The record gives the reactivity of an RNA of 177 nucleotides to DMS and 2A3. For 2A3, 1,996 sequencing reads were counted. Reactivities are rounded to 0.1 and cut off at 0 and 3. DMS adducts were read by reverse transcription with MarathonRT. For DMS, 4,498 sequencing reads were counted.
RNA sequence: GGGAACGACUCGAGUAGAGUCGAAAAGCGCGUGAGGGUGGUGACGAUUAUUUCUCGUCGAAAUAAAAGAGGGCGUAGGCGUAGUCGGGGUGCUUACCGUGGUUCUAAUGAGGUACGCUCUGUGCGGCGAGGCUAAUUGAUUCGUCAAUUAGCCUCGAAAAGAAACAACAACAACAAC
Reactivity to DMS in 0.01 (KOAc 150mM, MgCl2 10mM, bicine 150mM(pH8.5), 24C), signal-to-noise 3, nucleotides 027 to 126: g020c030g010c050g010u000g010a090g020g000g020u010g000g000u010g010a080c050g000a110u000u010a060u000u000u000c060u010c150g010u000c100g010a040a030a060u000a030a030a100a140g020a060g000g000g010c060g020u000a060g000g010c050g010u000a080g010u000c040g010g010g010g020u010g010c080u000u000a050c060c020g010u000g010g010u000u000c080u000a050a070u000g010a070g010g000u000a030c040g010c020u000c050u000g010u010g000c040g000g000
Reactivity to 2A3 in 0.01 (KOAc 150mM, MgCl2 10mM, bicine 150mM(pH8.5), 24C), signal-to-noise 1, nucleotides 027 to 126: g010c050g020c020g030u070g040a060g020g020g010u040g000g030u060g010a010c010g020a000u000u060a060u030u150u040c070u000c020g130u070c050g010a000a080a000u110a020a080a030a000g100a060g020g020g020c020g040u040a030g010g000c040g030u010a020g050u040c020g000g000g000g000u020g030c000u000u020a040c020c010g040u040g030g030u020u050c020u020a030a040u130g020a010g020g060u020a010c030g010c000u000c020u020g080u070g000c000g040g000